An RNA of 207 nucleotides, treated with DMS and 2A3 and read out base by base. The data come from the RNA Mapping Database (RMDB), library M2RFPK.

RNA sequence: GGGAACGACUCGAGUAGAGUCGAAAAGAAGGGUGAAAGCCCUUGAUACUGUAGUGGAAGUUAUAAAUAAGAAGAGUUCUGAGUUGCUUAAGCAGAACUAAAAUAAAAAGACAAGCAUUAUUACAAACAUGGCGAGGUAAGUUCGCUUACCUCGCAAGGAUUAAAUAUCGUUCGCGAUAUUUAAUCCAAAAGAAACAACAACAACAAC
Reactivity to DMS in 0.01 (KOAc 150mM, MgCl2 10mM, bicine 150mM(pH8.5), 24C), signal-to-noise 2, nucleotides 027 to 156: g000a040a020g000g030g020u000g020a110a090a240g000c050c020c010u010u000g010a170u010a060c050u020g000u000a060g000u000g000g000a050a080g000u000u010a190u000a180a040a210u000a130a120g000a120a200g000a110g010u000u000c040u000g010a150g020u010u010g010c040u010u010a070a140g040c040a080g000a060a040c000u000a020a030a040a070u010a030a070a110a070a120g020a120c080a020a050g000c040a060u000u010a050u010u000a090c070a050a080a030c090a050u010g020g010c000g050a010g010g040u000a010a000g030u000u020c300g010c020u010u000a030c020c020u010c000g040c050a010a010
Reactivity to 2A3 in 0.01 (KOAc 150mM, MgCl2 10mM, bicine 150mM(pH8.5), 24C), signal-to-noise 3, nucleotides 027 to 156: g040a000a000g010g010g020u060g030a060a010a010g030c020c010c020u010u000g030a020u040a070c050u050g100u180a040g020u020g070g010a060a050g000u070u090a080u080a240a130a030u120a090a030g060a060a010g020a000g040u020u000c020u030g050a040g060u020u030g130c010u070u020a110a010g000c000a010g010a020a020c070u050a010a030a000a000u060a000a090a010a010a000g040a020c030a010a000g000c000a000u010u120a040u080u140a210c120a090a080a020c050a060u080g070g000c000g000a000g000g000u000a000a010g010u020u060c080g010c080u000u000a000c000c000u000c010g000c000a000a000